[RMDB]
RNA sequence: GGGAACGACUCGAGUAGAGUCGAAAAUUUCUCCUGAAAUUAGAGAACCUUCUCUUACGAAGAAGACCGCGGUCAGUAUGCAGGAAUCAAAAGAAGAAGGGCGUUCUGAUGAAUCUUCUGAAAGUGACAUUAUCGUCACUUUCGAGUGACGAUAAUGAAAAGAAACAACAACAACAAC
Reactivity to 2A3 in 0.01 (KOAc 150mM, MgCl2 10mM, bicine 150mM(pH8.5), 24C), signal-to-noise 4, nucleotides 027 to 126: u030u020u010c050u040c000c020u060g100a120a100a070u080u060a060g000a000g010a080a040c000c000u100u010c010u000c000u030u020a060c070g040a060a090g030a030a020g020a020c050c070g060c070g090g020u050c020a020g060u060a090u100g020c030a040g030g070a030a030u040c040a030a160a100a080g040a050a010g020a000a030g040g000g010c010g020u020u000c000u000g010a030u000g010a070a050u010c030u070u010c030u040g110a190a140a100g150u100g070a020
Reactivity to DMS in 0.01 (KOAc 150mM, MgCl2 10mM, bicine 150mM(pH8.5), 24C), signal-to-noise 6, nucleotides 027 to 126: u000u000u000c040u000c020c090u010g000a100a100a110u010u010a040g010a070g010a070a130c190c070u000u000c010u000c020u010u000a120c200g000a160a070g010a080a050g010a100c080c060g010c110g020g000u000c040a070g010u000a020u010g010c040a040g000g010a300a150u000c050a040a090a100a080g010a050a080g010a110a070g000g000g010c090g020u000u000c010u010g010a050u000g000a110a110u000c040u000u000c020u000g000a040a060a070g000u010g000a140